Conditions: 150 mM KOAc, 10 mM MgCl2 and 150 mM bicine (pH 8.5), 24 C. An RNA of 177 nucleotides, treated with 2A3 and DMS and read out base by base. The data come from the RNA Mapping Database (RMDB), library OK2TRN. The 2A3 profile rests on 815 reads.

RNA sequence: GGGAACGACUCGAGUAGAGUCGAAAAGGAUACAUUCGAAGAUAGAGUGGAGAGUGAUGUUUUAGUCGGUGCUAAGGUACGAAGUAAACUGCAAGGUCUAUUGCGAUUUCGCGAGGAAGAAGACCUAUAGCCUAGAAGGUUUCGACCUUCUAGGCUAAAAAGAAACAACAACAACAAC
Reactivity to 2A3 in 0.01 (KOAc 150mM, MgCl2 10mM, bicine 150mM(pH8.5), 24C), signal-to-noise 1, nucleotides 027 to 126: g070g000a050u030a100c040a040u030u070c000g110a040a030g040a180u100a050g100a030g020u090g060g000a020g000a010g040u020g030a070u050g100u030u040u040u050a070g010u010c030g060g020u060g100c050u010a020a090g050g020u060a140c060g000a010a020g030u050a000a130a130c060u030g130c140a090a020g000g010u070c010u140a090u000u060g010c020g060a090u090u200u150c050g020c000g020a000g070g010a100a140g070a090a000g020a080c010c000u000a030
Reactivity to DMS in 0.01 (KOAc 150mM, MgCl2 10mM, bicine 150mM(pH8.5), 24C), signal-to-noise 3, nucleotides 027 to 126: g020g030a150u000a050c150a100u010u000c060g020a140a060g020a090u000a050g000a080g030u000g020g000a070g010a040g010u010g030a080u010g010u000u000u000u010a090g040u000c060g020g030u000g000c080u010a040a060g020g010u000a070c060g020a050a070g000u010a030a060a090c060u010g000c100a120a030g000g010u010c020u000a130u000u000g010c030g000a290u010u000u000c040g020c020g000a050g010g000a090a100g000a050a080g010a020c020c020u000a170